[RMDB]
Description: Source: RMDB library OK3TST, as collected in RNAgym. This 207-nucleotide RNA was probed chemically with 2A3. 2A3 adducts were read by reverse transcription with SuperScript II with manganese.
RNA sequence: GGGAACGACUCGAGUAGAGUCGAAAAUCUUCAAGGGAACACCCUUCGACAUCAAGAAGCACACGCUCUUCAGCGAGUUCUACAUCAACCGUGAGUCUCAUCUGGAGCUGGCCAGGUACCUGGCCUCGGGUGGGGAUUACCGACCGGUAUUCAGCCGGACGCUAGUGUAGUUCGCUACACUAGCGUCAAAAGAAACAACAACAACAAC
Reactivity to 2A3 in 0.01 (KOAc 150mM, MgCl2 10mM, bicine 150mM(pH8.5), 24C), signal-to-noise 2, nucleotides 027 to 156: u040c040u150u070c020a040a030g050g000g060a130a010c040a230c070c010c000u040u050c070g090a080c010a150u130c060a110a080g070a040a000g050c020a050c000a010c120g010c030u010c020u120u120c070a030g030c010g060a020g020u060u010c050u100a140c020a120u130c060a030a130c020c050g070u060g120a020g060u000c000u020c010a110u000c040u040g180g010a040g080c110u060g060g020c010c000a020g040g040u090a070c030c010u000g000g020c010c000u000c010g000g010g000u010g030g090g020g000a020u050u040a060c000c040g100a010c000c030g000g000u050a150u070u200c040a020g040c000c000g040